[RMDB]
RNA sequence: GGGAACGACUCGAGUAGAGUCGAAAAAUGAGUAUUAUAUUCACGGAACCAUCAACUGAGACCCAAUGAGUGAGGCCCGAUAUAUGUUUGAUGGCUUCUGGGUUGAACGGCCGGUCAGUAGGUACCACAGGUCGAUAAAUUUCGAUUUAUCGACCUGAAAAGAAACAACAACAACAAC
Reactivity to DMS in 0.01 (KOAc 150mM, MgCl2 10mM, bicine 150mM(pH8.5), 24C), signal-to-noise 3, nucleotides 027 to 126: a060u000g000a070g020u000a090u010u030a130u000a050u010u010c050a080c070g010g010a070a100c020c010a070u010c050a030a040c040u000g000a240g010a070c030c000c050a090a120u000g010a150g040u000g000a100g010g010c020c010c050g020a110u010a110u020a070u020g020u010u000u000g010a110u010g010g020c090u000u000c010u010g010g010g010u000u000g000a080a070c110g010g010c030c060g000g010u000c060a050g010u000a040g010g010u000a070c060c060a160
Reactivity to 2A3 in 0.01 (KOAc 150mM, MgCl2 10mM, bicine 150mM(pH8.5), 24C), signal-to-noise 2, nucleotides 027 to 126: a030u100g020a030g030u060a130u190u230a190u040a030u100u060c020a020c020g030g020a010a020c020c000a030u030c030a030a040c020u090g020a040g020a130c000c020c000a030a130u170g020a010g170u100g030a060g020g000c000c020c000g010a000u030a000u010a020u180g210u090u060u090g090a090u070g000g000c000u010u000c000u000g000g020g040u010u000g040a050a000c010g020g000c010c000g000g010u010c000a010g010u040a020g000g080u030a020c000c000a020